RNA sequence: GGGAACGACUCGAGUAGAGUCGAAAAGAUAUGGACGCUAGAGGAGCUUGGAUUUAUGUCGAUGAAGCGACGUCGGAAACGACGUCGCUUCAUCGAGCAUUGUCAGCUCCGAUUGGCGUCCUAAGUCCAUGUUUUAGUACUUCGGUACUAAAACAUGAAAAGAAACAACAACAACAAC
Reactivity to DMS in 0.01 (KOAc 150mM, MgCl2 10mM, bicine 150mM(pH8.5), 24C), signal-to-noise 2, nucleotides 027 to 126: g010a140u010a300u010g000g000a020c000g030c000u000a030g010a300g000g000a020g010c010u010u020g040g000a030u000u010u000a010u010g030u000c010g000a020u010g010a040a020g030c000g020a020c010g000u000c000g000g000a160a090a280c010g020a010c000g030u000c000g020c010u000u000c010a000u000c000g000a040g030c000a010u000u000g000u000c010a050g000c010u000c010c000g000a210u010u010g020g010c010g010u010c000c010u010a000a090g010u000c050